[RMDB]
RNA sequence: GGGAACGACUCGAGUAGAGUCGAAAAGUGCGCGCCCCAGAGCAUGAACACCAUCGGGCCGCCCUGCGCGCUCAAGCUGGCCAGCACCGCGUGCACCAGCCGCCCCCAGCCCAGGCCGGCGUGCGAGCCGGAUGGGUAAAUUCGUUUACCCAUCCGGAAAAGAAACAACAACAACAAC
Reactivity to DMS in 0.01 (KOAc 150mM, MgCl2 10mM, bicine 150mM(pH8.5), 24C), signal-to-noise 9, nucleotides 027 to 126: g020u000g010c020g020c050g010c030c030c030c050a120g000a120g010c050a060u000g010a090a100c130a120c090c070a110u010c070g010g010g010c020c040g010c220c030c020u000g010c150g010c030g010c030u000c090a120a100g000c010u000g010g000c060c100a100g000c020a050c040c190g010c170g010u000g010c010a140c020c030a040g000c020c060g000c030c010c010c010c030a170g000c010c020c020a070g000g000c100c020g010g000c020g020u010g000c030g000a120g010
Reactivity to 2A3 in 0.01 (KOAc 150mM, MgCl2 10mM, bicine 150mM(pH8.5), 24C), signal-to-noise 5, nucleotides 027 to 126: g050u040g000c020g000c010g030c030c000c010c020a040g030a020g050c050a050u090g070a070a040c070a050c060c030a080u090c010g020g040g020c010c010g020c010c010c010u050g010c030g000c010g010c020u040c070a050a030g000c000u030g020g010c050c130a030g020c020a020c030c120g130c060g070u020g010c020a040c020c010a010g010c010c030g060c010c000c000c000c000a010g000c000c010c000a000g020g010c010c010g020g000c020g010u080g050c020g010a010g030
Notes: Chemical mapping of a 177-nucleotide RNA with DMS and 2A3. Conditions: 150 mM KOAc, 10 mM MgCl2 and 150 mM bicine (pH 8.5), 24 C. Source: RMDB library OK2TST, as collected in RNAgym. For 2A3 the reverse transcriptase was SuperScript II with manganese. The 2A3 profile rests on 18,606 reads. The DMS profile rests on 28,524 reads. Values cover nucleotides 27 to 126.